[RMDB]
RNA sequence: GGGAACGACUCGAGUAGAGUCGAAAAGAUUGGAAGCUGUAUGGGGAACUAGCAACAAUGUCUGUCUGUGCAGGUUCAAUAGGACUCUUUAAGGUCACCAGGUAGAGAUAUGAAGAUUGUGGUUGCCCAUUUAGAGUCUCUUCGGAGACUCUAAAUGAAAAGAAACAACAACAACAAC
Reactivity to 2A3 in 0.01 (KOAc 150mM, MgCl2 10mM, bicine 150mM(pH8.5), 24C), signal-to-noise 2, nucleotides 027 to 126: g000a060u080u090g020g040a050a020g060c040u040g030u150a060u080g000g040g010g040a050a060c020u030a070g040c040a010a070c010a040a090u130g030u050c030u020g000u020c010u030g070u050g060c010a020g050g060u040u050c040a020a010u080a160g100g000a020c040u040c000u210u180u130a060a040g030g020u070c020a020c000c040a000g010g000u080a020g030a020g010a140u090a080u250g060a110a060g010a080u010u110g030u030g060g060u050u050g100c040c010
Reactivity to DMS in 0.01 (KOAc 150mM, MgCl2 10mM, bicine 150mM(pH8.5), 24C), signal-to-noise 4, nucleotides 027 to 126: g010a090u000u010g020g010a080a070g010c070u000g020u000a060u010g010g010g010g000a050a060c060u010a090g010c070a090a100c090a070a070u000g010u000c020u000g010u000c030u000g010u010g010c030a100g010g000u000u000c120a070a100u010a090g030g010a040c030u000c060u010u010u000a110a130g000g010u000c030a070c030c040a040g010g030u000a030g000a040g000a050u000a050u000g010a090a110g000a090u000u010g000u000g000g000u000u000g000c010c020
Source: RMDB library OK2TRN, as collected in RNAgym. This 177-nucleotide RNA was probed chemically with 2A3 and DMS. The RNA was probed in 150 mM KOAc, 10 mM MgCl2 and 150 mM bicine (pH 8.5) at 24 C. The DMS profile rests on 4,474 reads.